Source: RMDB library VIROID, as collected in RNAgym. Structure probing data (DMS and 2A3) for a 207-nucleotide construct. The RNA was probed in 150 mM KOAc, 10 mM MgCl2 and 150 mM bicine (pH 8.5) at 24 C. Values are in units of 0.01, from 0 to 300, in steps of 10.
RNA sequence: GGGAACGACUCGAGUAGAGUCGAAAAGGACAAAUUCCGUAACCGUGUGAGGCCAACAUCAAAGAUGCGUACCUAGCUGCGUUUCAACCUGCGUGGGUUGAGGCGGCUUAGCGGAUUAGGGCGUUCUGCCCCAGUGGUACCAUUACCCUAUGCAAAGGAUACUGAUAUACUUCGGUAUAUCAGUAUCAAAAGAAACAACAACAACAAC
Reactivity to DMS in 0.01 (KOAc 150mM, MgCl2 10mM, bicine 150mM(pH8.5), 24C), signal-to-noise 4, nucleotides 027 to 156: g030g020a110c050a100a080a170u000u000c020c020g020u000a100a120c030c030g020u000g010u010g010a110g010g040c020c030a090a070c050a050u010c030a140a120a180g010a070u010g010c070g040u000a060c000c020u000a100g020c010u000g010c010g020u000u010u000c020a020a030c020c000u000g030c300g030u010g010g020g020u000u010g010a050g020g030c000g000g030c040u000u000a050g030c050g000g010a170u000u000a050g010g020g030c010g010u000u010c120u000g040c000c000c010c030a070g030u000g010g010u000a050c050c040a090u010u000a100c030c010c000u000a140u000g010c080a100a130a210g010
Reactivity to 2A3 in 0.01 (KOAc 150mM, MgCl2 10mM, bicine 150mM(pH8.5), 24C), signal-to-noise 9, nucleotides 027 to 156: g050g000a020c090a050a120a050u170u020c030c020g060u080a040a080c040c030g030u050g050u040g090a080g040g000c050c030a070a050c010a100u110c090a100a110a060g060a040u070g040c050g020u060a100c000c010u010a020g010c010u030g020c010g020u020u080u010c000a010a000c000c010u160g100c200g230u300g030g000g000u000u000g010a000g020g010c020g010g000c020u010u070a010g000c010g010g040a040u080u170a030g020g000g000c040g140u280u050c100u210g010c000c000c000c000a040g050u070g050g000u030a050c010c010a010u020u070a070c010c010c010u100a090u170g080c100a080a060a060g130